An RNA of 177 nucleotides, treated with DMS and read out base by base. The RNA was probed in 150 mM KOAc, 10 mM MgCl2 and 150 mM bicine (pH 8.5) at 24 C. Source: RMDB library OK1LIB, as collected in RNAgym.
[RMDB]
RNA sequence: GGGAACGACUCGAGUAGAGUCGAAAACUUGAAAUCAUUGAUGGAAGGAAGACGGUGAAGGCAAAGACGCACCUGGGUUCAUGUUAUGUGCGUACAAAACACAUGGAUGGGGCACGUAAAAAGAUUGCAAAAAGGGCUCUUUCGAGAGCCCUUUUUGAAAAGAAACAACAACAACAAC
Reactivity to DMS in 0.01 (KOAc 150mM, MgCl2 10mM, bicine 150mM(pH8.5), 24C), signal-to-noise 2, nucleotides 027 to 126: c060u030u000g010a110a080a060u080c050a130u020u010g000a050u000g000g040a130a050g010g000a030a150g000a020c110g000g000u000g000a140a100g000g000c180a080a110a060g000a060c030g020c010a110c020c050u000g000g000g000u040u000c070a040u060g000u020u000a000u000g000u000g000c040g000u050a040c130a050a000a110a060c100a050c010a090u020g000g010a110u000g000g000g000g000c050a000c090g030u010a050a070a080a010a080g010a110u000u010g000